[RMDB]
RNA sequence: GGGAACGACUCGAGUAGAGUCGAAAAUUGUAGUCACUCCUCUUGUUUCAGCAGGCAUAUUUGGUGUAAAACCAGCUGUGUCUUUUGAUUAUCUUAUUAGGGAGGCUAAGACUAGAGUUUUAGUCGUACAGCUGGAUCUUCGGAUCCAGCAAAAGAAACAACAACAACAAC
Reactivity to 2A3 in 0.01 (KOAc 150mM, MgCl2 10mM, bicine 150mM(pH8.5), 24C), signal-to-noise 4, nucleotides 027 to 129: u010u030g150u070a010g020u020c010a010c040u000c000c000u040c010u060u060g050u080u050u000c000a000g000c000a020g020g000c020a000u010a000u010u040u000g010g050u040g030u150a090a170a020a010c000c010a000g000c030u000g000u000g000u000c000u000u010u010u000g020a010u010u060a090u110c120u060u090a120u030u190a110g010g040g010a010g000g000c030u080a110a000g000a010c010u030a000g000a020g080u000u000u010u050a050g020u050c100g040u080a060c010a010
Reactivity to DMS in 0.01 (KOAc 150mM, MgCl2 10mM, bicine 150mM(pH8.5), 24C), signal-to-noise 2, nucleotides 027 to 129: u020u000g030u040a060g000u000c030a130c100u000c030c010u040c060u020u030g050u010u010u050c030a050g000c080a000g000g000c010a030u010a010u020u030u000g040g040u020g040u000a090a070a140a060c000c000a030g000c090u010g090u010g040u010c010u000u000u080u050g030a030u030u060a000u020c190u090u040a070u040u030a060g000g000g000a110g000g000c140u000a000a000g000a020c000u010a090g020a080g000u000u000u000u000a110g030u010c030g020u030a110c050a000